RNA sequence: GGGAACGACUCGAGUAGAGUCGAAAACAUGCGAAAGGAUGGGACCAAUCGGAGGACUUAUUGAGCAUGUCCCAUCCGAAACGUACGAUAAUGUAACUACUUAUGUAUAUUCCAUCCGAAACGUACGUUCUCGCCAUGGAUGGGAAAGCAUGCUGCACAAUCCUUUCAACUUCGGUUGAAAGGAUUGAAAAGAAACAACAACAACAAC
Reactivity to DMS in 0.01 (KOAc 150mM, MgCl2 10mM, bicine 150mM(pH8.5), 24C), signal-to-noise 3, nucleotides 027 to 156: c030a090u000g010c010g030a120a120a170g030g000a030u000g010g010g020a040c020c100a110a140u010c080g010g040a200g010g020a130c100u000u010a090u000u000g010a120g000c070a120u010g000u000c000c000c000a040u020c000c000g000a020a030a030c000g020u010a030c000g000a140u000a080a050u010g020u010a060a080c060u010a050c070u000u000a090u000g010u000a090u000a170u010u000c020c000a020u000c030c020g020a070a070a100c010g030u000a000c030g020u010u000c030u000c110g020c070c100a190u010g030g010a030u000g000g030g010a060a040a180g020c040a050u000g010c010u000g040c030a260
Reactivity to 2A3 in 0.01 (KOAc 150mM, MgCl2 10mM, bicine 150mM(pH8.5), 24C), signal-to-noise 9, nucleotides 027 to 156: c040a040u160g010c020g060a080a030a040g010g000a010u010g010g000g010a010c010c040a050a060u050c060g040g020a080g040g080a070c090u160u120a160u190u210g060a040g020c120a040u140g060u110c000c000c000a000u000c000c000g000a000a010a000c000g010u020a000c010g040a050u080a190a060u210g110u180a080a080c050u140a010c050u280u190a080u200g050u030a060u030a050u190u020c020c000a010u000c020c020g060a110a060a020c010g010u020a000c000g000u030u020c090u040c100g040c040c030a090u220g000g000a000u000g000g010g000a010a030a000g030c020a020u080g020c030u110g020c060a000
Overview:
Conditions: 150 mM KOAc, 10 mM MgCl2 and 150 mM bicine (pH 8.5), 24 C. Structure probing data (DMS and 2A3) for a 207-nucleotide construct. 2A3 is a SHAPE reagent: it acylates the 2'-hydroxyl of flexible nucleotides of all four kinds. DMS adducts were read by reverse transcription with MarathonRT.